Source: RMDB library OK2TST, as collected in RNAgym.
This 177-nucleotide RNA was probed chemically with DMS and 2A3.
The DMS profile rests on 5,602 reads.
DMS adducts were read by reverse transcription with MarathonRT.
2A3 adducts were read by reverse transcription with SuperScript II with manganese.

[RMDB]
RNA sequence: GGGAACGACUCGAGUAGAGUCGAAAAGGCACUCGACGAACGUGCUGACCAUGCUCUGCGUGAUGACGAGCUUGCCGUCCUCAGUCGUGGGCCAGGUGCCUCGGGGUCCGUGCCAGGCCUUCGAGCCUAGGAUCUGUGUAUUCGUACACAGAUCCUAAAAAGAAACAACAACAACAAC
Reactivity to DMS in 0.01 (KOAc 150mM, MgCl2 10mM, bicine 150mM(pH8.5), 24C), signal-to-noise 4, nucleotides 027 to 126: g020g020c000a020c010u000c030g010a050c030g000a140a080c090g020u000g020c070u000g000a090c130c130a120u020g010c050u000c030u000g020c040g010u010g010a180u010g000a090c040g000a050g020c100u020u000g010c040c010g000u000c030c040u010c130a100g010u010c030g030u000g000g010g000c030c030a060g010g020u000g000c080c020u020c050g000g000g000g010u000c040c100g010u000g020c050c060a100g000g010c010c020u000u010c070g000a070g000c080c060
Reactivity to 2A3 in 0.01 (KOAc 150mM, MgCl2 10mM, bicine 150mM(pH8.5), 24C), signal-to-noise 3, nucleotides 027 to 126: g040g010c010a020c020u020c030g040a010c010g040a120a010c050g030u060g040c140u050g030a030c020c030a120u160g000c010u040c020u100g040c030g030u110g070a160u190g030a070c020g010a010g010c000u040u070g020c000c000g020u020c000c010u040c020a040g130u040c010g000u030g020g010g010c010c010a030g010g050u070g040c020c000u050c050g030g020g000g020u040c040c040g020u040g050c000c020a010g030g010c000c000u040u110c020g030a050g000c010c030
Reactivities are given for positions 27 through 126.